Structure probing data (2A3 and DMS) for a 207-nucleotide construct. Conditions: 150 mM KOAc, 10 mM MgCl2 and 150 mM bicine (pH 8.5), 24 C. For DMS the reverse transcriptase was MarathonRT. For 2A3 the reverse transcriptase was SuperScript II with manganese.
RNA sequence: GGGAACGACUCGAGUAGAGUCGAAAAGUAAACGAUCUCGGUUGUUUCUCUGAAGGCAUGAUCACCCCGUCCGAUGCGGAAGUUCGUGCUUCCGUCGAACGCGAAAGUCGGACGGCGGCCAUGAGUCAAUAUGUUUAAGGCUUCGGCCUUAAACAAACCACAUAACAAUAUUCGUAUUGUUAUGUGGAAAAGAAACAACAACAACAAC
Reactivity to 2A3 in 0.01 (KOAc 150mM, MgCl2 10mM, bicine 150mM(pH8.5), 24C), signal-to-noise 5, nucleotides 027 to 156: g110u080a000a130a140c090g040a090u050c040u050c110g020g000u010u000g000u000u010u000c040u020c060u050g100a080a040g140g010c020a010u010g010a040u100c050a030c000c010c000c000g000u000c000c000g000a000u030g000c000g020g010a010a000g020u150u300c180g130u300g050c000u000u000c000c000g020u010c010g050a140a040c070g000c020g140a110a060a010g020u010c010g000g000a010c010g010g000c040g010g000c010c010a010u010g010a010g050u040c020a030a060u070a080u220g010u000u000u000a000a000g000g000c000u030u060c240g080g000c000c020u000u000a000a000a000c000a000a000a000
Reactivity to DMS in 0.01 (KOAc 150mM, MgCl2 10mM, bicine 150mM(pH8.5), 24C), signal-to-noise 1, nucleotides 027 to 156: g030u010a140a100a120c030g000a000u000c030u000c040g020g090u000u000g000u000u000u000c010u000c030u000g010a120a130g000g010c020a040u000g000a060u000c140a110c020c020c010c010g000u000c000c010g000a040u000g020c060g000g020a040a040g030u000u000c200g000u010g010c010u000u000c020c030g010u000c020g010a080a170c090g040c090g010a120a090a170g000u000c000g000g030a020c040g020g010c050g000g000c060c000a030u000g010a090g020u000c070a090a170u000a090u020g010u000u000u000a030a000g000g000c000u000u010c290g040g000c010c000u000u010a000a010a010c010a000a070a120